Structure probing data (2A3 and DMS) for a 177-nucleotide construct. DMS adducts were read by reverse transcription with MarathonRT. The RNA was probed in 150 mM KOAc, 10 mM MgCl2 and 150 mM bicine (pH 8.5) at 24 C. High DMS reactivity at an A or C suggests that its Watson-Crick edge is free.
[RMDB]
RNA sequence: GGGAACGACUCGAGUAGAGUCGAAAACGAGCGGCUUGGAUUAGGGCGGGAUCUCUCAUCAGUCACCAUAGUAACUCAGGUAGCGCGGCAACGUCCACGCUAACUAAACGGGGCUCAUUCUCAGAAUCGACUAUCCUAAGUUCGCUUAGGAUAGUCGAAAAGAAACAACAACAACAAC
Reactivity to 2A3 in 0.01 (KOAc 150mM, MgCl2 10mM, bicine 150mM(pH8.5), 24C), signal-to-noise 4, nucleotides 027 to 126: c040g010a010g050c020g030g030c030u050u060g060g020a060u140u120a100g010g060g010c010g010g050g010a060u010c020u020c010u000c010a080u000c020a030g040u040c040a010c080c010a010u040a090g080u060a100a100c020u020c120a020g050g000u020a000g000c000g010c020g040g000c040a170a060c160g060u040c010c010a010c010g010c010u040a060a020c010u040a020a030a110c050g000g010g020g010c010u020c050a100u080u040c020u020c010a030g070a050a090u010
Reactivity to DMS in 0.01 (KOAc 150mM, MgCl2 10mM, bicine 150mM(pH8.5), 24C), signal-to-noise 1, nucleotides 027 to 126: c060g000a170g030c030g000g000c060u000u010g010g010a100u010u000a150g000g000g000c090g020g020g030a110u000c120u000c050u000c070a030u010c090a030g000u000c050a090c040c070a030u010a090g000u000a040a060c120u000c080a080g000g000u000a010g040c050g070c080g000g000c050a170a050c180g010u010c020c010a000c010g000c050u000a000a050c100u000a020a150a140c000g000g000g030g000c040u020c030a060u000u000c020u000c010a130g000a140a100u000